Source: RMDB library OK1LIB, as collected in RNAgym. An RNA of 177 nucleotides, treated with DMS and 2A3 and read out base by base.

[RMDB]
RNA sequence: GGGAACGACUCGAGUAGAGUCGAAAAGGUGUACGCUCUGUCGCAGAUCGAGGGAGGAUUCGAGGGCACGCGAAAUCCCCUCUCCUUCGCUUGGCGCAAGAGCAUGGAAAGGCAUUUUAUCUGCUCGCGAACCUCACAUAUUCGUAUGUGAGGUUCGAAAAGAAACAACAACAACAAC
Reactivity to DMS in 0.01 (KOAc 150mM, MgCl2 10mM, bicine 150mM(pH8.5), 24C), signal-to-noise 2, nucleotides 027 to 126: g000g010u010g000u000a120c100g020c020u000c000u010g000u020c010g000c020a100g000a020u020c100g020a000g010g000g010a030g000g000a070u010u030c050g000a100g000g000g000c090a050c070g030c090g010a020a090a110u000c060c000c000c090u010c000u000c010c010u000u000c030g000c090u010u010g010g020c000g000c120a070a020g010a020g010c010a140u020g010g020a070a060a100g010g000c030a020u010u010u010u000a080u010c050u010g010c010u000c060g000
Reactivity to 2A3 in 0.01 (KOAc 150mM, MgCl2 10mM, bicine 150mM(pH8.5), 24C), signal-to-noise 7, nucleotides 027 to 126: g060g000u030g020u050a060c070g010c000u010c010u030g220u240c050g010c030a020g030a180u050c010g000a000g010g000g000a020g030g030a090u130u100c050g030a100g030g020g030c040a050c100g080c050g060a090a040a090u100c000c000c010c000u000c010u010c000c000u010u000c020g050c100u070u200g030g000c010g000c060a050a070g020a000g010c030a010u110g040g070a070a140a060g040g000c010a010u050u020u020u050a140u060c040u030g010c010u020c020g040
The 2A3 profile rests on 6,235 reads.
For DMS, 4,578 sequencing reads were counted.
DMS adducts were read by reverse transcription with MarathonRT.
2A3 adducts were read by reverse transcription with SuperScript II with manganese.
Values are in units of 0.01, from 0 to 300, in steps of 10.